[RMDB]
RNA sequence: GGGAACGACUCGAGUAGAGUCGAAAAAAGCAUGUCUCUCUAUUGUCUCUCUAUUCAGAACUUAGAAUGGUGAUGGAUCGAUAGAGAGACAUUCCUGCAUCUGUCAUCCAUCACCAUAAAAACAAAACAAAACUCAGUUAUUCGUAACUGAGUUUUGAAAAGAAACAACAACAACAAC
Reactivity to 2A3 in 0.01 (KOAc 150mM, MgCl2 10mM, bicine 150mM(pH8.5), 24C), signal-to-noise 3, nucleotides 027 to 126: a000a000g120c070a040u060g010u000c000u010c010u000c010u020a020u050u060g060u040c020u010c000u010c010u120a080u150u140c050a070g050a190a050c040u120u140a100g070a300a050u020g000g000u000g000a000u000g000g000a010u040c050g010a000u000a000g000a000g000a010g000a000c000a000u000u000c000c000u000g010c000a080u020c070u160g210u090c020a010u000c010c010a010u010c020a000c000c000a000u050a000a010a000a000a000c050a020a060a020a020
Reactivity to DMS in 0.01 (KOAc 150mM, MgCl2 10mM, bicine 150mM(pH8.5), 24C), signal-to-noise 3, nucleotides 027 to 126: a050a060g020c210a040u000g000u000c010u000c010u010c010u000a050u000u000g000u010c070u000c080u010c060u000a050u000u010c110a090g000a110a100c210u000u000a100g020a120a050u000g010g020u000g010a010u000g000g010a000u000c100g000a020u000a010g000a000g000a030g000a000c010a010u000u000c010c020u010g000c160a110u010c110u020g000u010c080a030u000c000c000a010u000c010a030c010c000a010u010a010a080a050a070a050c160a040a030a100a100
The data come from the RNA Mapping Database (RMDB), library M2PK90. This 177-nucleotide RNA was probed chemically with 2A3 and DMS. The RNA was probed in 150 mM KOAc, 10 mM MgCl2 and 150 mM bicine (pH 8.5) at 24 C. For 2A3 the reverse transcriptase was SuperScript II with manganese. Values cover nucleotides 27 to 126. The DMS profile rests on 2,747 reads. For DMS the reverse transcriptase was MarathonRT.